Structure probing data (DMS and 2A3) for a 177-nucleotide construct. It was measured as part of the RMDB library OK1LIB. High DMS reactivity at an A or C suggests that its Watson-Crick edge is free.
RNA sequence: GGGAACGACUCGAGUAGAGUCGAAAAGCUCGUCUAAUAACAGAUAAGAUAAUAAUAAAGAAACGAUAGGUGUUAAAUAAAGAGACAUUGUUGCAUCAGAGACACCAACUGACUUCACAAUAUAAGCGCUGUAUGCGCUAUUCGUAGCGCAUACAGCAAAAGAAACAACAACAACAAC
Reactivity to DMS in 0.01 (KOAc 150mM, MgCl2 10mM, bicine 150mM(pH8.5), 24C), signal-to-noise 1, nucleotides 027 to 126: g050c060u000c080g010u000c030u000a040a130u000a070a010c070a010g000a030u060a100a150g000a090u010a070a090u070a160a130u040a090a110a070g000a060a130a190c040g010a100u020a070g000g010u030g030u000u000a130a120a020u010a080a070a090g030a050g000a120c090a040u000u010g020u080u000g000c070a180u010c000a080g060a070g000a100c040a140c000c000a110a060c110u000g000a020c180u000u010c150a020c140a030a020u000a070u000a060a120g020c300
Reactivity to 2A3 in 0.01 (KOAc 150mM, MgCl2 10mM, bicine 150mM(pH8.5), 24C), signal-to-noise 1, nucleotides 027 to 126: g030c000u000c030g010u020c090u110a050a070u090a300a010c000a070g090a100u100a070a000g000a030u090a090a100u090a090a010u060a040a300a000g090a030a010a000c000g000a100u000a090g000g000u060g080u140u020a000a260a180u300a060a300a000g160a010g000a000c040a030u030u100g120u070u120g000c040a090u010c000a040g000a000g000a130c000a000c060c000a000a010c010u030g090a000c000u070u120c030a000c050a240a000u190a000u060a210a250g010c000